[RMDB]
An RNA of 177 nucleotides, treated with DMS and 2A3 and read out base by base. Values cover nucleotides 27 to 126.

RNA sequence: GGGAACGACUCGAGUAGAGUCGAAAAAGCGUCGACGAACCUUCCAACCUUCCAAAGCAGCAAAAGCUGAACCUUCCAACCUUGCAAUCUACUCGAGAGGAGGAGGAGGAGGAGGAGGAGGAAUUAAGAGACUAUUAAAAUUCGUUUUAAUAGUCUCAAAAGAAACAACAACAACAAC
Reactivity to DMS in 0.01 (KOAc 150mM, MgCl2 10mM, bicine 150mM(pH8.5), 24C), signal-to-noise 3, nucleotides 027 to 126: a090g010c060g050u000c030g000a090c060g010a090a110c070c010u000u010c020c010a100a080c050c030u000u000c020c040a050a100a120g010c030a020g020c060a090a040a070a130g000c040u000g000a080a080c030c010u000u010c030c040a060a090c040c010u010u010g000c080a060a090u000c010u000a010c000u000c000g010a030g000a120g010g000a130g010g000a150g000g000a140g020g010a090g010g000a130g010g000a110g000g020a130g000g010a300a050u010u000a060a090
Reactivity to 2A3 in 0.01 (KOAc 150mM, MgCl2 10mM, bicine 150mM(pH8.5), 24C), signal-to-noise 3, nucleotides 027 to 126: a000g060c020g030u040c010g030a070c020g020a070a060c000c000u040u000c010c010a110a090c020c010u040u060c010c020a080a140a080g010c010a010g000c000a090a100a180a110g010c010u030g030a080a070c000c010u040u000c010c020a080a080c010c010u000u040g030c020a030a070u000c000u010a020c020u010c010g010a020g000a010g030g040a040g000g030a040g020g040a060g020g030a060g030g090a030g010g040a030g020g050a020g010g010a030a020u140u070a180a040